An RNA of 177 nucleotides, treated with 2A3 and DMS and read out base by base.

RNA sequence: GGGAACGACUCGAGUAGAGUCGAAAACUGAGCCUGCUCGACCGUGCAUCGGGUGCGAGCUGCAAAAGUGAUCGCACCCUCCUGUGAUGUGCAACACGUAGAACUGGCAGGCGUGCGGUGCUGGUUAUCGAGUCAUUAGGUUCGCCUAAUGACUCGAAAAAGAAACAACAACAACAAC
Reactivity to 2A3 in 0.01 (KOAc 150mM, MgCl2 10mM, bicine 150mM(pH8.5), 24C), signal-to-noise 2, nucleotides 027 to 126: c040u020g000a000g020c010c010u020g030c020u040c020g100a100c060c000g010u040g000c010a040u110c120g010g010g010u010g010c010g010a040g000c010u030g010c010a100a270a020a070g040u060g080a080u040c000g000c000a020c050c030c000u050c040c020u120g060u110g050a080u010g070u080g050c090a150a030c060a070c080g050u130a040g000a240a050c040u060g040g020c000a000g030g000c010g030u030g010c020g010g030u020g070c020u060g020g070u110u000a100
Reactivity to DMS in 0.01 (KOAc 150mM, MgCl2 10mM, bicine 150mM(pH8.5), 24C), signal-to-noise 3, nucleotides 027 to 126: c030u000g000a170g000c020c010u000g010c020u010c090g000a110c070c030g020u010g020c070a050u000c100g000g010g010u000g030c000g000a020g000c030u010g000c240a050a080a130a030g020u000g000a090u000c000g030c000a020c000c010c000u000c070c100u000g020u000g000a070u000g010u020g020c120a050a100c100a070c080g000u000a090g010a150a090c070u000g000g010c020a040g020g000c120g000u010g010c070g020g000u000g000c010u000g020g020u000u010a050
It was measured as part of the RMDB library OK2TST.